[RMDB]
An RNA of 207 nucleotides, treated with 2A3 and DMS and read out base by base. The data come from the RNA Mapping Database (RMDB), library M2RFOK. The reactions ran in a buffer of 150 mM KOAc, 10 mM MgCl2 and 150 mM bicine (pH 8.5), at 24 C. For DMS the reverse transcriptase was MarathonRT. The DMS profile rests on 3,399 reads.
RNA sequence: GGGAACGACUCGAGUAGAGUCGAAAAAGCACGAUUUUUGAGGACGCAUUUUGUCCGUGCGGUAAUGCCCUCCUUUACACUUUCUCGCAUGGUGCGGGAGUGUGGAGAGGAAACAAAAGCUAGUCUCGAUAGGCGGUUAACUUCGGUUAACCGCCAAGGACAUGAACUAGUUCGCUAGUUCAUGUCCAAAAGAAACAACAACAACAAC
Reactivity to 2A3 in 0.01 (KOAc 150mM, MgCl2 10mM, bicine 150mM(pH8.5), 24C), signal-to-noise 5, nucleotides 027 to 156: a000g000c000a000c020g010a040u000u020u010u010u080g080a120g010g020a010c050g020c140a160u020u000u010u060g030u040c050c010g000u000g000c000g050g070u150a080a070u210g020c020c000c000u030c010c010u050u040u020a010c000a000c000u080u120u050c020u030c010g030c020a060u270g280g030u240g160c000g010g020g000a000g000u010g000u020g010g000a050g010a010g000g040a050a030a010c020a010a010a000a000g060c040u080a030g040u020c040u030c120g090a120u150a150g000g000c000g000g010u000u000a000a000c000u020u040c160g040g010u000u000a000a000c000c000g000c000c000a000a000
Reactivity to DMS in 0.01 (KOAc 150mM, MgCl2 10mM, bicine 150mM(pH8.5), 24C), signal-to-noise 1, nucleotides 027 to 156: a170g030c020a040c030g010a050u000u010u000u010u000g010a140g050g040a030c020g020c090a140u000u000u010u000g000u000c000c000g010u020g030c020g000g000u000a060a070u000g010c010c000c040u000c020c010u000u010u020a060c000a030c000u000u000u000c000u000c020g040c000a300u020g040g000u020g020c000g040g000g030a000g020u000g010u000g000g000a030g010a090g010g000a110a030a030c030a050a030a060a120g020c050u010a150g000u000c010u000c020g020a130u000a140g000g020c030g010g040u000u020a000a000c000u000u030c300g050g000u010u000a010a020c000c000g040c000c000a010a030